Chemical mapping of a 177-nucleotide RNA with DMS and 2A3. Conditions: 150 mM KOAc, 10 mM MgCl2 and 150 mM bicine (pH 8.5), 24 C. For 2A3 the reverse transcriptase was SuperScript II with manganese.

RNA sequence: GGGAACGACUCGAGUAGAGUCGAAAAGAAAGAAAUCAAAGCGGAUUCUAGUCUAAUCGGAGAGACUAUCGAAUAACUCGUUCUUGAGCAAUAUCCGUAUUAGAUCUAACUGAGGGAUGAGUAGAAAGGGUUACAUACAGUUCGCUGUAUGUAACCCAAAAGAAACAACAACAACAAC
Reactivity to DMS in 0.01 (KOAc 150mM, MgCl2 10mM, bicine 150mM(pH8.5), 24C), signal-to-noise 3, nucleotides 027 to 126: g010a070a100a100g010a050a070a030u020c060a070a120a190g010c100g010g010a060u010u000c000u010a070g020u000c000u000a050a100u000c080g010g030a080g000a070g000a050c070u030a030u010c090g010a000a050u030a150a040c100u020c060g040u010u030c140u000u010g030a070g000c030a020a080u020a090u000c010c020g010u000a070u010u010a070g000a050u050c080u010a110a120c090u010g000a050g010g030g020a050u000g020a020g000u000a120g000a050a090a070
Reactivity to 2A3 in 0.01 (KOAc 150mM, MgCl2 10mM, bicine 150mM(pH8.5), 24C), signal-to-noise 3, nucleotides 027 to 126: g090a000a040a000g050a010a070a030u050c040a090a060a030g060c080g050g000a010u040u000c020u020a000g030u000c000u010a070a100u090c040g050g000a090g010a000g000a090c030u020a020u070c010g050a050a010u100a130a070c020u020c070g080u170u000c070u090u200g010a020g000c040a070a060u020a010u100c000c000g010u030a040u040u090a020g040a010u020c010u060a050a050c050u020g040a040g030g030g010a020u060g010a020g060u050a020g130a060a090a020